An RNA of 177 nucleotides, treated with DMS and 2A3 and read out base by base. 2A3 adducts were read by reverse transcription with SuperScript II with manganese. It was measured as part of the RMDB libraries RFM100 and RFMREP. For DMS the reverse transcriptase was MarathonRT. The reactions ran in a buffer of 150 mM KOAc, 10 mM MgCl2 and 150 mM bicine (pH 8.5), at 24 C.

RNA sequence: GGGAACGACUCGAGUAGAGUCGAAAAAUGCGCCACUAGCGAAAGAGAAAAGCCAAAGGGCGUAGUCAUAGGGUAUGACGGAUGAGAAGUCCAAUCUUCAUGUUGGCUUGCUACCAUAGCAUUCCAUACAAUAGCGUGUAUUCGUACACGCUAUUGUAAAAGAAACAACAACAACAAC
Reactivity to DMS in 0.01 (KOAc 150mM, MgCl2 10mM, bicine 150mM(pH8.5), 24C), signal-to-noise 6, nucleotides 027 to 126: a110u020g010c000g030c000c010a010c040u000a100g000c020g020a090a100a130g020a170g000a110a130a110a170g000c020c010a030a060a030g010g000g010c010g020u010a050g000u000c050a060u010a080g020g000g010u020a050u020g000a060c080g000g000a070u010g000a080g010a060a070g000u010c010c010a080a070u010c040u020u020c110a100u030g000u000u000g000g000c030u010u000g000c030u010a110c120c100a100u020a030g010c070a090u010u010c010c030a190u000
Reactivity to 2A3 in 0.01 (KOAc 150mM, MgCl2 10mM, bicine 150mM(pH8.5), 24C), signal-to-noise 9, nucleotides 027 to 126: a000u050g000c000g000c000c010a020c010u010a010g010c020g100a060a160a040g210a040g040a030a110a060a010g000c010c010a220a270a010g030g000g000c020g000u000a010g010u000c010a020u090a060g140g030g050u120a040u030g030a040c030g010g030a030u070g040a050g020a080a010g070u060c030c010a030a050u020c030u160u100c080a090u210g030u050u020g020g000c000u010u030g060c010u040a090c030c060a070u070a020g010c000a020u070u000c010c000a010u010